[RMDB]
RNA sequence: GGGAACGACUCGAGUAGAGUCGAAAAGAUAUGGAUGUAUAUCUCUGGUAUCCUAUGAAGUGGUAUUAGUUUCGGAAACGAAACUAAUACCAUGGAGGAUACCAAGGAGCCGAGUACAUCCUAAGUCCAAUAACCAUGGCUUCGGCCAUGGUUAUUGAAAAGAAACAACAACAACAAC
Reactivity to 2A3 in 0.01 (KOAc 150mM, MgCl2 10mM, bicine 150mM(pH8.5), 24C), signal-to-noise 1, nucleotides 027 to 126: g140a020u230a170u300g000g000a010u020g070u000a010u030a120u020c030u000c030u060g020g010u010a030u020c030c040u300a300u230g040a040a010g010u020g030g000u030a010u000u030a040g000u000u000u000c010g000g050a100a040a030c020g050a000a010a000c000u000a000a000u030a010c000c000a000u010g010g010a010g000g000a000u010a030c010c010a000a110g130g020a000g190c230c190g110a100g010u000a000c000a040u000c010c000u000a110a010g140u040c030
Reactivity to DMS in 0.01 (KOAc 150mM, MgCl2 10mM, bicine 150mM(pH8.5), 24C), signal-to-noise 1, nucleotides 027 to 126: g000a160u000a300u000g040g010a010u010g010u000a000u000a070u010c010u000c070u010g010g000u000a000u000c000c000u010a280u020g000a150a230g020u000g000g010u010a000u000u000a010g030u000u010u000c000g030g010a070a110a300c000g020a000a000a010c000u000a000a000u000a010c000c000a000u000g010g000a030g000g000a020u030a000c000c000a000a040g000g030a020g030c300c290g020a160g020u010a030c010a000u000c010c000u030a110a150g000u000c030